RNA sequence: GGGAACGACUCGAGUAGAGUCGAAAAACACUAGGUGGUAACCCCUCGCUAUUAUUCGGAAUAGGACACUCUCUAUCAGAAUGAAUUCUUGCUGUAAUAACAGAUAGAGUAGGUUGUUACAGACUAUCAUUUCACACCUCUUCGGAGGUGUGAAAUGAAAAGAAACAACAACAACAAC
Reactivity to 2A3 in 0.01 (KOAc 150mM, MgCl2 10mM, bicine 150mM(pH8.5), 24C), signal-to-noise 1, nucleotides 027 to 126: a000c110a020c020u120a090g300g200u050g040g020u110a050a090c010c000c000c010u130c020g030c020u000a000u010u010a050u090u070c050g130g030a030a120u080a090g000g010a000c000a000c130u000c000u000c000u020a000u040c000a030g060a300a080u080g050a040a090u150u070c150u100u170g080c000u000g020u040a030a030u000a080a030c000a000g010a000u040a010g000a020g010u050a140g040g040u010u030g000u000u000a000c010a020g060a000c060u070a060u050